[RMDB]
RNA sequence: GGGAACGACUCGAGUAGAGUCGAAAACGUAUACGAUCUCAGAAUGUCGACACACGACACCGUAUAUGAUGAUGGUGCAGGUGUACGAUGUUCCGCUAAGCACUACGUGCCAGUCCAUGAUAAACAAGUACCCAACGCUAUUCGUAGCGUUGGGUACAAAAGAAACAACAACAACAAC
Reactivity to 2A3 in 0.01 (KOAc 150mM, MgCl2 10mM, bicine 150mM(pH8.5), 24C), signal-to-noise 2, nucleotides 027 to 126: c010g040u060a060u030a150c050g070a120u010c060u000c090a000g020a000a050u030g000u000c000g010a000c000a010c000a010c060g220a060c010a010c030c000g040u010a080u030a090u210g300a110u190g030a020u030g050g000u010g000c040a060g130g060u010g010u120a250c030g000a000u030g010u000u000c000c000g010c030u030a020a060g010c020a010c070u070a030c070g020u010g120c020c020a030g010u030c020c000a050u180g070a110u270a040a150a020c050a090a110
Reactivity to DMS in 0.01 (KOAc 150mM, MgCl2 10mM, bicine 150mM(pH8.5), 24C), signal-to-noise 2, nucleotides 027 to 126: c060g040u000a060u010a080c130g000a070u020c210u000c030a090g030a040a020u000g020u000c030g000a070c050a000c040a140c010g020a300c000a020c030c010g050u000a020u000a180u020g000a070u000g000a120u000g000g000u000g020c120a250g020g010u000g020u010a040c000g030a040u000g000u000u000c030c040g060c080u010a120a110g010c020a030c120u020a050c030g000u000g020c030c070a080g000u010c020c020a060u030g010a070u000a060a030a070c150a060a100

Structure probing data (2A3 and DMS) for a 177-nucleotide construct. The data come from the RNA Mapping Database (RMDB), library OK2TRN. For 2A3, 1,916 sequencing reads were counted. For DMS, 1,219 sequencing reads were counted. Values cover nucleotides 27 to 126.